Notes
An RNA of 207 nucleotides, treated with 2A3 and DMS and read out base by base. For DMS the reverse transcriptase was MarathonRT. The DMS profile rests on 2,748 reads. It was measured as part of the RMDB library OK3TST.
[RMDB]
RNA sequence: GGGAACGACUCGAGUAGAGUCGAAAACUCGCGAGCCCAUCGAGGCGUGGGGAGCGACAUGAAUCAGCCUCGAUUAGAUGUGGUCGACUGUACAGCGGCGUACAGCGACCUAGUUAGAAGCCGCAAAACCGGAAGAGAUGACGCUCGACGGACGUCAGACGCAUAUAAUGUUCGCAUUAUAUGCGUCAAAAGAAACAACAACAACAAC
Reactivity to 2A3 in 0.01 (KOAc 150mM, MgCl2 10mM, bicine 150mM(pH8.5), 24C), signal-to-noise 4, nucleotides 027 to 156: c060u020c000g020c010g030a130g080c020c000c000a000u010c010g020a010g000g030c040g040u060g000g030g030g030a050g030c040g100a100c060a130u250g110a130a120u090c040a060g010c000c000u010c010g020a030u030u100a050g090a100u080g120u070g050g010u000c000g030a300c040u000g000u000a010c000a040g010c030g020g040c020g000u000a010c000a000g000c000g000a000c000c010u000a000g000u000u000a060g000a130a010g010c010c000g010c000a030a030a010a110c040c010g000g080a100a020g020a060g010a080u090g030a020c010g010c050u010c030g050a040c020g060g000a020c030g010u020c020a020
Reactivity to DMS in 0.01 (KOAc 150mM, MgCl2 10mM, bicine 150mM(pH8.5), 24C), signal-to-noise 2, nucleotides 027 to 156: c070u000c000g020c050g000a130g010c000c000c010a170u000c030g030a060g030g020c050g070u000g040g020g000g010a160g050c030g050a300c100a110u000g020a150a070u000c070a050g010c030c000u000c010g010a100u000u010a140g000a150u050g000u000g000g040u010c030g000a130c010u000g020u000a010c000a130g030c120g000g000c080g010u020a020c060a070g000c020g000a020c000c000u000a010g020u000u010a100g000a060a120g010c040c010g010c040a100a030a110a080c040c080g040g000a080a120g010a130g000a170u000g020a070c020g020c020u000c070g010a070c040g030g000a070c010g000u000c010a120